[RMDB]
RNA sequence: GGGAACGACUCGAGUAGAGUCGAAAACUCUUAAGGAGUUGAUGAUGUAUGCCGCUGAUCCAGCCAUGCACAUUGCCUCCUCUAACGCUUUUCUUGAUUUGAGGACAUCAUGUUUUAGUGUCGCUGCGUAGCCGACUAUGUUCGCAUAGUCGGCUACAAAAGAAACAACAACAACAAC
Reactivity to DMS in 0.01 (KOAc 150mM, MgCl2 10mM, bicine 150mM(pH8.5), 24C), signal-to-noise 1, nucleotides 027 to 126: c040u010c030u020u020a100a040g000g010a030g000u000u000g000a040u000g000a120u000g040u000a000u000g000c200c170g020c000u000g010a150u010c240c020a020g050c030c020a000u000g000c030a020c000a030u000u000g010c280c010u000c000c000u000c150u020a050a080c150g020c070u000u000u000u000c000u000u000g000a070u000u000u000g000a130g000g010a050c110a070u040c060a040u000g010u020u030u010u000a060g000u000g000u000c100g000c070u010g000c210
The record gives the reactivity of an RNA of 177 nucleotides to DMS. The DMS profile rests on 1,023 reads. The reactions ran in a buffer of 150 mM KOAc, 10 mM MgCl2 and 150 mM bicine (pH 8.5), at 24 C.